[RMDB]
This 207-nucleotide RNA was probed chemically with 2A3 and DMS.
RNA sequence: GGGAACGACUCGAGUAGAGUCGAAAAGAAGUAAUGACUGACACUGUAAAUCUUCUAGAAAGAAAUGGUGCAGGGAGAAAAGGACUCGUGAGGGCUACAGGGCGGACAAGACAGUGAACUAAAGUGGUUGGGCCCCAUGAGGGGCCUUGCUCUCCACGUUAGGAUUAUGGUUCGCCAUAAUCCUAACAAAAGAAACAACAACAACAAC
Reactivity to 2A3 in 0.01 (KOAc 150mM, MgCl2 10mM, bicine 150mM(pH8.5), 24C), signal-to-noise 1, nucleotides 027 to 156: g070a020a000g030u110a070a090u120g050a000c030u020g020a020c010a000c090u010g010u100a050a140a100u020c000u040u000c020u090a130g100a100a040a020g050a000a080a060u070g010g000u040g020c000a020g010g030g010a040g040a010a070a030a000g030g020a020c040u020c080g010u030g040a030g030g000g000c000u030a040c040a000g010g020g000c000g050g000a030c010a030a020g000a010c000a020g000u010g070a070a000c040u070a210a050a000g010u010g010g020u000u000g020g000g010c010c000c010c010a070u240g060a220g050g030g040g000c000c030u000u000g010c010u010c000u000c040c010a030c080
Reactivity to DMS in 0.01 (KOAc 150mM, MgCl2 10mM, bicine 150mM(pH8.5), 24C), signal-to-noise 1, nucleotides 027 to 156: g000a120a070g010u000a090a100u000g010a100c030u000g010a140c030a040c100u000g030u010a110a160a300u010c010u000u000c000u010a070g030a250a080a140g000a100a080a090u000g030g000u000g020c020a030g000g020g030a060g010a010a100a120a040g000g010a070c040u000c040g000u000g030a120g020g000g030c010u000a060c030a160g020g010g040c020g070g040a050c080a020a070g030a070c040a070g030u040g030a080a080c060u020a080a070a120g010u010g010g020u000u010g000g050g000c020c000c010c010a080u000g000a280g050g000g060g020c020c030u010u020g030c000u000c120u010c030c000a190c300